[RMDB]
RNA sequence: GGGAACGACUCGAGUAGAGUCGAAAAAGCGAGUAUGUACUCGUCGAAAAGACGAGUACUCCGCGCGCAAAGUACUCGCAGCUCAGAAAUCAAAGUAUCCGAUAAGGAUACGCGCGCGGACUGAGCAAGGCAGUACGACUUUCGAGUCGUACUGCCUAAAAGAAACAACAACAACAAC
Reactivity to 2A3 in 0.01 (KOAc 150mM, MgCl2 10mM, bicine 150mM(pH8.5), 24C), signal-to-noise 1, nucleotides 027 to 126: a000g000c000g000a000g000u000a000u270g000u010a000c000u000c000g000u000c000g090a140a110a000a080g000a000c000g000a000g000u000a000c030u000c000c000g000c030g020c000g000c110a280a000a060g010u000a000c000u030c000g000c000a000g010c000u000c000a090g050a080a160a010u010c020a140a050a000g000u000a000u010c000c010g090a130u070a280a040g000g000a010u000a000c000g020c000g040c000g000c010g000g000a030c040u110g040a000g050c080a040
Chemical mapping of a 177-nucleotide RNA with 2A3. Conditions: 150 mM KOAc, 10 mM MgCl2 and 150 mM bicine (pH 8.5), 24 C.